[RMDB]
RNA sequence: GGGAACGACUCGAGUAGAGUCGAAAAGCCUUCUAUGCUCGCGUCUUUCGAGGGGUACGUCGCCACUGGCCGCUGAAAAGUGGUGUGGCACUGCUCCGGCGAGGACGUGGGCGGACCGGCGGGAUGGGAUAGAUCAUUCGUUCGCGAAUGAUCUAUCAAAAGAAACAACAACAACAAC
Reactivity to 2A3 in 0.01 (KOAc 150mM, MgCl2 10mM, bicine 150mM(pH8.5), 24C), signal-to-noise 2, nucleotides 027 to 126: g000c000c000u030u000c130u040a060u090g000c010u010c000g010c000g010u010c010u070u300u080c010g010a010g020g020g000g010u010a040c200g010u020c170g010c000c010a000c020u050g220g000c010c010g000c000u050g030a060a090a000a010g030u010g000g010u080g010u010g020g000c000a000c000u000g000c020u000c000c010g050g060c010g000a010g000g010a000c000g010u010g010g000g000c020g000g000a010c010c000g000g000c020g000g000g020a060u140g100g070
Reactivity to DMS in 0.01 (KOAc 150mM, MgCl2 10mM, bicine 150mM(pH8.5), 24C), signal-to-noise 3, nucleotides 027 to 126: g000c010c000u000u000c110u000a270u020g000c010u000c020g020c020g010u000c000u000u010u000c000g030a300g000g000g000g000u000a010c220g010u000c160g030c000c000a020c010u010g020g020c000c010g040c000u000g000a080a030a200a010g060u000g020g030u000g020u000g000g000c000a010c000u010g000c000u000c010c000g020g000c070g000a050g000g000a020c010g000u000g010g000g010c010g000g000a080c300c210g000g000c030g030g020g000a130u010g030g010
About this RNA: Chemical mapping of a 177-nucleotide RNA with 2A3 and DMS. Values cover nucleotides 27 to 126. For 2A3 the reverse transcriptase was SuperScript II with manganese. The 2A3 profile rests on 3,073 reads. Source: RMDB library RFMREP, as collected in RNAgym. The DMS profile rests on 2,451 reads.